[RMDB]
RNA sequence: GGGAACGACUCGAGUAGAGUCGAAAAAAUGAUGCGGGCCAUGUCGGGUCCUGACAGUGCGUGCGAUGGGCAAGAGGCGCCGGCUAUUGUACGCAGACGCCUGCGGAUUGGGGCGGCGCGGCUUGCACACUGAGCACGAGUUCGCUCGUGCUCAGUGAAAAGAAACAACAACAACAAC
Reactivity to DMS in 0.01 (KOAc 150mM, MgCl2 10mM, bicine 150mM(pH8.5), 24C), signal-to-noise 7, nucleotides 027 to 126: a080a050u010g010a110u010g010c040g010g010g010c030c060a060u000g010u010c060g010g000g010u010c070c040u010g010a080c080a080g010u000g020c040g020u000g010c040g000a100u010g010g010g010c020a020a030g000a060g010g010c010g010c010c010g000g000c010u000a070u000u000g010u000a120c010g000c010a020g010a200c300g020c240c010u000g010c010g010g010a160u010u000g020g020g000g010c020g000g000c010g010c010g010g000c010u000u000g010c030a210
Reactivity to 2A3 in 0.01 (KOAc 150mM, MgCl2 10mM, bicine 150mM(pH8.5), 24C), signal-to-noise 4, nucleotides 027 to 126: a010a010u220g050a050u100g020c030g030g000g010c030c010a040u030g060u060c070g060g030g110u070c020c020u000g010a020c020a020g050u050g100c090g150u060g010c020g040a080u110g010g070g040c020a020a010g020a030g080g000c010g010c010c010g000g020c000u050a080u160u170g050u060a010c000g000c000a000g030a050c170g240c060c010u020g000c010g010g020a060u060u110g040g000g020g070c010g000g000c010g000c010g060g010c000u010u010g000c010a000